[RMDB]
RNA sequence: GGGAACGACUCGAGUAGAGUCGAAAAAAUUUUGAUUGACAGACCCUAUUGGGAAAUCUAGUUGCAGUCAAGUAGAACAAGAUUUGGACUAAAUGAAAGAGGCUUUGCUUGGAAUUUCAGUGCAAAUCCAUACUAGCCCAGUGACUUAAUCUAUCCACACUAGUAAUUAGUUCGCUAAUUACUAGUGAAAAGAAACAACAACAACAAC
Reactivity to DMS in 0.01 (KOAc 150mM, MgCl2 10mM, bicine 150mM(pH8.5), 24C), signal-to-noise 2, nucleotides 027 to 156: a040a050u000u000u000u000g020a110u010u010g000a100c020a120g000a250c030c010c000u000a140u010u010g040g000g000a050a100a080u010c080u010a130g000u000u010g040c040a110g020u010c010a100a100g010u000a120g020a070a190c040a120a050g020a180u000u020u000g000g020a080c020u000a030a030a050u000g020a180a150a220g020a100g020g030c110u010u010u010g020c040u000u020g000g010a110a090u010u000u010c070a090g020u040g020c010a000a030a040u000c000c020a060u000a030c020u000a100g020c030c020c020a150g020u000g030a110c050u000u000a090a160u000c040u000a080u030c010c050a170
Reactivity to 2A3 in 0.01 (KOAc 150mM, MgCl2 10mM, bicine 150mM(pH8.5), 24C), signal-to-noise 3, nucleotides 027 to 156: a010a000u160u220u080u120g010a000u020u010g010a020c010a030g050a050c010c020c050u070a200u180u270g000g010g070a150a140a090u070c060u050a140g030u050u130g030c060a020g040u040c050a090a020g010u030a020g090a060a010c050a130a020g020a050u030u040u050g020g020a000c010u030a070a060a070u050g050a090a020a070g050a050g030g040c070u160u190u150g030c010u030u080g030g070a130a130u020u090u130c070a070g020u000g100c020a010a010a040u000c000c000a010u020a100c020u030a030g010c000c000c010a020g010u040g040a010c020u060u130a070a060u070c040u080a070u060c060c020a030
Background
This 207-nucleotide RNA was probed chemically with DMS and 2A3. The RNA was probed in 150 mM KOAc, 10 mM MgCl2 and 150 mM bicine (pH 8.5) at 24 C. Source: RMDB library OK3TST, as collected in RNAgym. DMS adducts were read by reverse transcription with MarathonRT. Values cover nucleotides 27 to 156.